[RMDB]
RNA sequence: GGGAACGACUCGAGUAGAGUCGAAAAGAUAUGGAUACAGACUUUUGACGCUCGACGUGUCGGAAACGACACCAAGAGCGAUAAGUCUGAUCCUAAGUCAAAACUUAGUCGCUUCGGCGACUAAGAACUUUGAAUGUAGGUUCGCCUACAUUCAAAGAAAAGAAACAACAACAACAAC
Reactivity to DMS in 0.01 (KOAc 150mM, MgCl2 10mM, bicine 150mM(pH8.5), 24C), signal-to-noise 5, nucleotides 027 to 126: g000a050u000a300u010g000g010a020u000a160c010a020g020a020c000u000u000u000u010g020a170c100g010c010u000c000g010a300c300g000u000g000u000c000g010g000a070a090a160c000g000a010c010a010c000c020a070a300g000a010g000c020g010a010u000a000a010g000u000c000u000g000a060u000c000c000u010a020a100g010u010c030a080a050a080a130c010u000u000a000g000u000c000g010c010u000u020c170g030g000c010g010a010c000u000a000a000g010a050a220
Reactivity to 2A3 in 0.01 (KOAc 150mM, MgCl2 10mM, bicine 150mM(pH8.5), 24C), signal-to-noise 3, nucleotides 027 to 126: g020a010u060a020u110g020g000a000u260a300c010a010g010a010c010u100u130u230u300g300a180c110g000c000u020c000g020a040c030g010u000g000u010c000g000g020a040a060a030c010g000a010c000a000c010c010a110a020g020a000g000c000g000a000u000a010a000g000u020c000u010g000a010u000c000c000u010a080a010g030u030c020a010a020a120a170c010u010u000a000g000u000c000g000c010u050u070c300g200g010c000g000a010c000u000a000a000g000a010a000

The record gives the reactivity of an RNA of 177 nucleotides to DMS and 2A3. For DMS, 4,206 sequencing reads were counted. The RNA was probed in 150 mM KOAc, 10 mM MgCl2 and 150 mM bicine (pH 8.5) at 24 C. For 2A3 the reverse transcriptase was SuperScript II with manganese. For 2A3, 8,247 sequencing reads were counted. It was measured as part of the RMDB library TTRDEL.